[RMDB]
RNA sequence: GGGAACGACUCGAGUAGAGUCGAAAACUGACGCUUACUUUGCCUAAUAAUACCUAUAGCAACAGCAUUGCUGCACAAUCAUCUCAGUCACACUAUAUGACUCGUAUUAUGUUCUGCAUGCAGAUCAUGACAGCACUAUAUUCGUAUAGUGCUGUCAAAAAGAAACAACAACAACAAC
Reactivity to DMS in 0.01 (KOAc 150mM, MgCl2 10mM, bicine 150mM(pH8.5), 24C), signal-to-noise 5, nucleotides 027 to 126: c040u000g000a070c130g010c060u000u000a060c060u000u010u000g010c000c030u000a050a080u010a090a070u010a080c060c030u010a080u000a110g010c020a040a060c110a100g010c070a190u010u000g010c030u000g000c060a020c100a060a030u010c080a050u010c080u000c070a050g000u010c040a030c100a080c120u010a100u000a120u000g010a040c030u000c110g020u010a070u010u000a050u000g010u000u000c020u000g000c040a090u000g010c030a020g000a060u000c070a100
Reactivity to 2A3 in 0.01 (KOAc 150mM, MgCl2 10mM, bicine 150mM(pH8.5), 24C), signal-to-noise 5, nucleotides 027 to 126: c000u020g060a010c040g000c030u010u070a030c020u040u110u090g030c000c020u090a120a080u130a080a060u090a130c020c030u090a060u050a130g030c030a010a040c020a040g010c010a050u020u210g020c030u020g020c020a010c020a030a100u090c010a050u010c050u010c060a010g020u030c010a040c020a020c120u100a070u020a030u300g030a020c000u000c040g050u080a050u150u040a050u110g030u030u020c000u020g010c020a060u080g000c000a000g010a070u070c010a030